RNA sequence: GGGAACGACUCGAGUAGAGUCGAAAAACGAGGAUGGCGCGAGAGGAAGGAUCAGAGGACGAGAGGGGAUGAGAUGGUAAAGAAGCGAGGAACGCCGAGGGGAUGUCUCCCAAGAAGGCAAAGAGAAGGCAAGAAUCGGACGCUCUCCCCACGACGCGAGUCGUGGCUUGUUCGCAAGCCACGACUCAAAAGAAACAACAACAACAAC
Reactivity to 2A3 in 0.01 (KOAc 150mM, MgCl2 10mM, bicine 150mM(pH8.5), 24C), signal-to-noise 1, nucleotides 027 to 156: a000c030g000a030g030g030a100u010g050g130c010g000c050g090a060g030a050g050g000a080a030g040g000a000u010c050a010g050a050g070g030a050c030g000a030g030a040g140g000g000g000a050u070g000a010g010a090u100g040g030u100a160a110a000g040a030a030g040c010g020a040g030g000a030a020c070g030c020c010g000a030g000g000g000g000a020u060g040u040c050u040c050c000c030a010a000g060a030a000g000g000c040a020a030a000g040a000g020a110a000g070g000c060a040a000g000a020a030u050c050g010g000a030c020g000c030u010c010u030c010c050c000c020a000c030g150a040c080g040c090